RNA sequence: GGGAACGACUCGAGUAGAGUCGAAAAAAUGUUGCAAUCACUCGUGCCCAAAAAGGUAUUCUUUGUGUUAUGACAUCUCAGGCACUCUUUGAGUCCUUAGAGUUUACUGAAUUGUCUUUUACUAAUUUAACUUGUCUCUUCGGAGACAAGAAAAGAAACAACAACAACAAC
Reactivity to DMS in 0.01 (KOAc 150mM, MgCl2 10mM, bicine 150mM(pH8.5), 24C), signal-to-noise 3, nucleotides 027 to 129: a040a040u070g020u050u050g020c120a200a070u050c090a000c040u030c090g000u020g020c050c020c010a010a050a070a140a070g040g030u000a110u040u010c090u040u020u030g050u030g070u000u000a000u060g020a020c020a030u030c000u010c030a030g000g000c300a050c010u030c030u000u000u000g050a150g020u040c100c020u050u000a010g020a000g000u000u000u000a160c000u000g020a060a060u050u000g030u000c020u000u000u000u000a000c160u000a050a120u070u020u020a090a020
Reactivity to 2A3 in 0.01 (KOAc 150mM, MgCl2 10mM, bicine 150mM(pH8.5), 24C), signal-to-noise 3, nucleotides 027 to 129: a000a000u240g000u040u100g000c010a010a020u010c000a000c020u000c010g040u020g020c000c000c000a010a000a000a020a020g130g010u080a060u040u080c060u070u150u080g030u030g040u120u140a080u190g010a000c000a150u080c060u000c060a000g000g030c070a010c030u000c040u030u050u150g000a010g050u010c010c010u000u000a000g010a000g000u000u040u090a070c020u000g020a010a030u050u030g020u000c000u020u050u000u020a010c010u010a030a150u080u090u080a090a020

The data come from the RNA Mapping Database (RMDB), library 15KLIB.
The record gives the reactivity of an RNA of 170 nucleotides to DMS and 2A3.
The reactions ran in a buffer of 150 mM KOAc, 10 mM MgCl2 and 150 mM bicine (pH 8.5), at 24 C.
The 2A3 profile rests on 5,184 reads.
For 2A3 the reverse transcriptase was SuperScript II with manganese.